[RMDB]
RNA sequence: GGGAACGACUCGAGUAGAGUCGAAAAAGUUCGCGCUUCCGUGAAACGCGAAAAUCGGACGGUGGCUGCAAGUCGCAUCGCAAAACGGCGGCAAGUGGAGUUAGCGAGAGGAGGCUGGGUUUUGGCUAGAACACACGGUACUUCGGUACCGUGUGAACAGCUUAUGUACUUUCGAGUACAUAAGCUGAAAAGAAACAACAACAACAAC
Reactivity to 2A3 in 0.01 (KOAc 150mM, MgCl2 10mM, bicine 150mM(pH8.5), 24C), signal-to-noise 3, nucleotides 027 to 156: a000g060u030u040c010g000c030g030c040u110u060c060c070g120u150g040a060a050a040c030g010c010g030a060a000a020a050u100c080g030g010a020c020g000g050u040g040g000c010u030g030c050a020a040g030u010c050g000c020a090u060c060g020c080a100a090a020a000c040g030g010c000g010g020c030a080a060g010u070g030g000a040g010u090u140a040g040c060g030a050g000a020g060g000a010g030g000c060u060g020g010g050u010u000u060u160g040g000c010u020a020g090a170a020c010a000c000a000c000g000g000u010a010c000u030u060c140g010g000u000a000c000c000g000u000g000u000g000a000a010
Reactivity to DMS in 0.01 (KOAc 150mM, MgCl2 10mM, bicine 150mM(pH8.5), 24C), signal-to-noise 1, nucleotides 027 to 156: a120g020u000u000c000g000c000g020c010u000u000c030c240g000u030g000a030a040a020c080g030c010g000a060a020a110a080u000c070g050g020a050c050g020g010u000g030g000c000u000g000c060a060a140g020u000c040g010c050a130u010c060g040c010a040a040a050a300c060g000g000c010g030g000c020a070a180g020u000g000g010a040g010u000u000a110g050c070g000a110g010a080g010g010a080g050g030c040u020g010g020g000u000u010u000u000g020g050c090u000a070g000a090a150c000a000c000a020c040g070g000u000a010c000u000u000c260g040g030u000a000c000c000g030u000g010u010g020a030a030
Annotation
This 207-nucleotide RNA was probed chemically with 2A3 and DMS. 2A3 adducts were read by reverse transcription with SuperScript II with manganese. For DMS the reverse transcriptase was MarathonRT. For 2A3, 1,754 sequencing reads were counted. Reactivities are given for positions 27 through 156. Values are in units of 0.01, from 0 to 300, in steps of 10. The DMS profile rests on 2,835 reads.